[RMDB]
RNA sequence: GGGAACGACUCGAGUAGAGUCGAAAACGAAGGACUUUCGAGUCCUUCGACUUACCGAGAAAGAACCUCGGUAUAAAUCUGGAACCCUUGGAAACAAGGGAAUGAACGGAAUCUUCGGAUUCCGUAACUCAUUAGGUGCUUUCGAGCACCUAAUGAGAAAAGAAACAACAACAACAAC
Reactivity to 2A3 in 0.01 (KOAc 150mM, MgCl2 10mM, bicine 150mM(pH8.5), 24C), signal-to-noise 1, nucleotides 027 to 126: c010g000a010a000g000g020a000c000u050u080u140c240g030a050g010u010c000c010u000u000c000g000a000c000u010u020a000c000c030g000a010g020a040a260a010g060a060a050c010c000u000c010g010g000u020a000u020a000a020a000u030c050u110g120g090a110a140c010c000c000u020u000g020g010a050a090a030c000a020a000g010g000g070a000a010u080g000a010a000c000g000g030a000a000u000c000u040u030c160g070g010a000u000u010c000c000g000u000a010a020
Reactivity to DMS in 0.01 (KOAc 150mM, MgCl2 10mM, bicine 150mM(pH8.5), 24C), signal-to-noise 1, nucleotides 027 to 126: c010g020a040a000g000g010a000c000u010u010u000c190g010a000g000u000c000c000u000u000c010g010a040c110u000u000a000c000c000g000a020g000a150a110a170g000a170a130c150c000u000c010g000g010u000a000u000a020a050a060u020c110u000g010g010a170a060c000c030c000u000u000g000g000a140a140a250c020a000a010g000g000g010a030a010u020g010a140a060c000g010g000a010a000u000c000u020u000c230g020g010a010u000u000c000c000g010u000a020a070